[RMDB]
RNA sequence: GGGAACGACUCGAGUAGAGUCGAAAAGCCGAUGAAUUGCCGAGAAGCCUGGCUCGAAAUCGUCGACGCAUCGACGACGGUCCUGCCAUGAGACUGUAACGAGGACAUGUCGCCUCGAAUGGCGUCGUAUAACAUGAGUGGUUCGCCACUCAUGUAAGUUAGAACAUUUCUUCGGAAAUGUUCUAACAAAAGAAACAACAACAACAAC
Reactivity to DMS in 0.01 (KOAc 150mM, MgCl2 10mM, bicine 150mM(pH8.5), 24C), signal-to-noise 2, nucleotides 027 to 156: g030c010c030g030a130u010g010a070a080u010u010g020c030c020g010a170g020a050a130g020c040c030u010g030g000c000u010c030g030a070a050a070u000c040g010u000c010g020a060c150g020c080a190u000c000g000a030c010g000a030c010g010g010u000c000c000u000g060c030c030a130u020g010a160g000a080c050u000g010u010a070a110c050g010a090g020g010a030c030a090u000g030u000c030g000c000c000u000c040g010a090a080u000g000g010c000g040u000c020g070u000a070u000a120a050c020a000u010g000a030g000u000g030g020u000u000c300g040c010c000a020c000u010c000a000u010g000u000a000a150
Reactivity to 2A3 in 0.01 (KOAc 150mM, MgCl2 10mM, bicine 150mM(pH8.5), 24C), signal-to-noise 6, nucleotides 027 to 156: g070c010c010g010a020u080g060a040a200u180u120g040c050c030g040a030g030a110a010g030c060c090u080g030g000c050u040c060g060a050a060a080u080c060g050u040c010g010a000c020g000c040a070u030c020g010a020c000g000a020c000g000g000u010c000c000u040g110c030c010a110u160g040a040g040a140c070u100g060u120a070a040c060g010a050g010g010a010c030a080u140g010u050c040g020c040c050u020c030g020a080a070u090g090g010c000g000u010c010g000u060a100u050a110a000c000a000u000g000a000g000u000g020g020u040u010c090g020c050c000a000c000u000c000a000u000g000u000a020a000
The record gives the reactivity of an RNA of 207 nucleotides to DMS and 2A3. For DMS, 5,197 sequencing reads were counted. The reactions ran in a buffer of 150 mM KOAc, 10 mM MgCl2 and 150 mM bicine (pH 8.5), at 24 C. 2A3 adducts were read by reverse transcription with SuperScript II with manganese. DMS adducts were read by reverse transcription with MarathonRT. Source: RMDB library M2RFPK, as collected in RNAgym.